[RMDB]
RNA sequence: GGGAACGACUCGAGUAGAGUCGAAAAACAACGGUUCGCCGUUGUAAAAAGCGUACUACGUUUGUGGAGUGAAAGAACUACGUGGGUCUCCCAAAUAGGAGACACACGCUUUCACGUUGAAACAAACGUAUCGCAAAAACUAGUCUUCGGACUAGAACAGUCCAUGCGUAUUCGUACGCAUGGACUGAAAAGAAACAACAACAACAAC
Reactivity to 2A3 in 0.01 (KOAc 150mM, MgCl2 10mM, bicine 150mM(pH8.5), 24C), signal-to-noise 1, nucleotides 027 to 156: a000c000a000a010c000g000g120u080u200c300g050c150c000g000u000u000g000u030a000a060a000a000a000g020c000g070u090a080c100u000a000c000g000u030u000u020g050u000g000g090a100g010u010g020a000a000a000g050a060a040c170u120a020c300g030u000g000g040g000u000c010u000c000c000c000a160a200a070u190a130g010g020a000g020a000c050a000c000a000c000g000c000u000u000u000c000a000c050g090u070u060g060a000a010a010c000a000a000a000c000g060u000a000u040c000g000c000a000a000a000a240a000c000u000a000g000u000c000u020u090c300g150g000a000c000u000a000g050a020a030
An RNA of 207 nucleotides, treated with 2A3 and read out base by base. The data come from the RNA Mapping Database (RMDB), library RNAMAK. The RNA was probed in 150 mM KOAc, 10 mM MgCl2 and 150 mM bicine (pH 8.5) at 24 C.